This 177-nucleotide RNA was probed chemically with 2A3 and DMS.
It was measured as part of the RMDB library TTRDES.
DMS adducts were read by reverse transcription with MarathonRT.
2A3 adducts were read by reverse transcription with SuperScript II with manganese.
The reactions ran in a buffer of 150 mM KOAc, 10 mM MgCl2 and 150 mM bicine (pH 8.5), at 24 C.
[RMDB]
RNA sequence: GGGAACGACUCGAGUAGAGUCGAAAAGAUAUGGACGGUGGGUGGACAUGUCGAACGGUCGGAAACGACCGUACGACAACAGCCAUUACCGUCCUAAGUCAAACAGAGGUCCUUCGGGACCUCUGAACAUGCGUAAACUGUUCGCAGUUUACGCAUGAAAAGAAACAACAACAACAAC
Reactivity to 2A3 in 0.01 (KOAc 150mM, MgCl2 10mM, bicine 150mM(pH8.5), 24C), signal-to-noise 1, nucleotides 027 to 126: g000a010u030a020u090g000g020a000c010g000g050u150g070g240g060u020g020g010a020c100a300u300g000u000c000g010a010a010c000g000g020u010c010g010g060a000a030a000c010g000a010c000c000g010u010a000c010g010a000c010a180a030c110a090g040c010c000a010u050u030a000c010c000g030u000c000c000u010a010a000g000u000c000a050a000a080c010a000g010a000g030g010u000c010c000u090u140c300g080g010g020a020c000c000u020c000u010g000a000a000
Reactivity to DMS in 0.01 (KOAc 150mM, MgCl2 10mM, bicine 150mM(pH8.5), 24C), signal-to-noise 2, nucleotides 027 to 126: g020a010u000a080u010g000g020a000c010g020g040u000g000g000g010u010g000g000a020c120a120u020g000u000c000g010a110a010c000g010g030u010c000g020g020a020a020a070c000g010a020c000c000g010u000a010c000g030a020c000a060a040c160a200g010c000c010a030u000u000a020c000c000g000u000c000c000u000a010a060g010u000c020a120a100a300c030a010g000a010g000g000u000c010c000u000u050c220g000g010g000a020c000c000u010c000u000g000a050a130